[RMDB]
RNA sequence: GGGAACGACUCGAGUAGAGUCGAAAAUUGUUAUAACGACCGGGAUCAACUUCCGAGACUUGGAAUAUAUCAUCAAAUAGAGUGUUAGACAUUGCUGCGGUUGUUAUGGAAGCAAUGAGCUGGCAACCAGCAGUAGUGAUUUCGAUCACUACUGCUGAAAAGAAACAACAACAACAAC
Reactivity to DMS in 0.01 (KOAc 150mM, MgCl2 10mM, bicine 150mM(pH8.5), 24C), signal-to-noise 5, nucleotides 027 to 126: u020u020g020u020u010a030u010a030a090c070g030a120c050c010g000g000g030a070u020c110a090a080c220u010u000c030c010g010a090g000a170c140u000u020g020g010a110a080u010a060u020a060u010c120a100u050c110a030a120a070u030a110g000a110g020u000g010u000u010a040g010a110c060a010u000u010g000c020u010g010c210g010g000u000u010g000u000u010a060u020g000g020a300a030g000c050a030a000u000g000a070g030c010u000g000g000c020a070a050c110
Reactivity to 2A3 in 0.01 (KOAc 150mM, MgCl2 10mM, bicine 150mM(pH8.5), 24C), signal-to-noise 4, nucleotides 027 to 126: u060u020g070u070u060a090u030a250a090c020g030a010c020c020g000g050g010a060u070c060a050a120c080u080u010c020c000g070a100g020a170c080u060u080g060g020a060a030u090a050u070a040u190c130a050u010c050a050a120a100u130a040g180a060g140u010g040u090u050a020g020a040c000a020u000u040g010c030u050g020c070g160g000u020u000g050u060u060a070u170g070g040a010a010g000c010a020a020u060g030a060g080c000u010g010g000c010a020a060c020

The data come from the RNA Mapping Database (RMDB), library OK1LIB. Chemical mapping of a 177-nucleotide RNA with DMS and 2A3. The RNA was probed in 150 mM KOAc, 10 mM MgCl2 and 150 mM bicine (pH 8.5) at 24 C. 2A3 adducts were read by reverse transcription with SuperScript II with manganese. As a SHAPE reagent, 2A3 marks flexible, mostly unpaired nucleotides at the ribose 2'-OH.